[RMDB]
RNA sequence: GGGAACGACUCGAGUAGAGUCGAAAAAUGGGGCAUGCUGUGUUCGCCCCUGCGCCUGGCAUCCUGGAGGGAAAAAGCAAGUGCUGUGGGCGGCGUGGCGGGCACCCGGCUCGGCCAGGCUCGCACCGACAGAUCUUUCUUUCGAGAAAGAUCUGUCAAAAGAAACAACAACAACAAC
Reactivity to 2A3 in 0.01 (KOAc 150mM, MgCl2 10mM, bicine 150mM(pH8.5), 24C), signal-to-noise 1, nucleotides 027 to 126: a000u100g000g000g020g000c020a040u080g000c060u070g030u030g060u270u190c050g010c010c000c000c000u000g010c010g030c010c000u040g060g030c010a030u020c020c000u120g130g120a160g090g000g030a050a110a030a020a010g060c040a090a000g050u050g070c030u030g030u210g000g010g020c040g000g030c030g020u020g010g000c000g000g000g000c010a090c040c010c000g000g030c020u030c010g030g030c010c020a050g030g040c040u040c020g010c000a070c030c030
Reactivity to DMS in 0.01 (KOAc 150mM, MgCl2 10mM, bicine 150mM(pH8.5), 24C), signal-to-noise 3, nucleotides 027 to 126: a120u010g000g000g010g010c020a060u000g020c050u000g020u000g010u000u000c090g000c030c000c000c000u000g010c070g020c020c020u000g020g000c040a120u000c020c020u010g010g000a170g020g000g000a030a050a080a120a100g010c040a080a050g010u000g020c030u000g010u010g000g010g000c020g010g020c030g010u000g010g010c020g010g010g020c030a090c050c040c040g000g000c030u000c040g000g010c000c010a060g000g000c020u000c040g010c120a100c140c070